The record gives the reactivity of an RNA of 177 nucleotides to 2A3 and DMS. It was measured as part of the RMDB library TTRDEL. Conditions: 150 mM KOAc, 10 mM MgCl2 and 150 mM bicine (pH 8.5), 24 C. The 2A3 profile rests on 3,005 reads. As a SHAPE reagent, 2A3 marks flexible, mostly unpaired nucleotides at the ribose 2'-OH. For 2A3 the reverse transcriptase was SuperScript II with manganese.
[RMDB]
RNA sequence: GGGAACGACUCGAGUAGAGUCGAAAAGAUAUGGAGCAGGACAUGCCUCAUUUCGGAAACGAAAUGGAAGGCAACAGCCUGGCUCCUAAGUCAAAGAUCCCGAUCCAGUUCGCUGGAUCGGGAUCAACUGUCUUCUUAUCUUCGGAUAAGAAGACAGAAAAGAAACAACAACAACAAC
Reactivity to 2A3 in 0.01 (KOAc 150mM, MgCl2 10mM, bicine 150mM(pH8.5), 24C), signal-to-noise 2, nucleotides 027 to 126: g030a000u030a030u120g000g000a000g010c010a000g010g050a090c050a150u100g000c000c000u030c020a000u000u010u010c000g010g000a100a050a050c010g010a020a030a010u080g050g140a090a110g030g000c000a020a020c000a010g030c000c000u090g210g000c000u010c000c000u000a090a030g030u030c010a000a030a230g010a000u000c060c000c010g000a020u000c000c000a020g110u170u180c200g180c240u000g000g010a000u000c030g000g020g000a000u000c000a000a000
Reactivity to DMS in 0.01 (KOAc 150mM, MgCl2 10mM, bicine 150mM(pH8.5), 24C), signal-to-noise 2, nucleotides 027 to 126: g000a030u020a300u000g010g000a030g020c010a000g030g000a060c070a210u000g000c000c010u000c010a020u000u000u000c010g010g000a120a070a150c000g000a000a010a020u000g000g030a120a050g000g010c020a020a060c280a170g000c000c000u000g000g010c000u000c000c000u000a000a080g030u000c030a060a110a170g000a010u000c000c010c010g000a010u000c000c010a000g010u010u030c230g020c010u020g000g000a000u000c000g000g000g000a000u000c000a020a080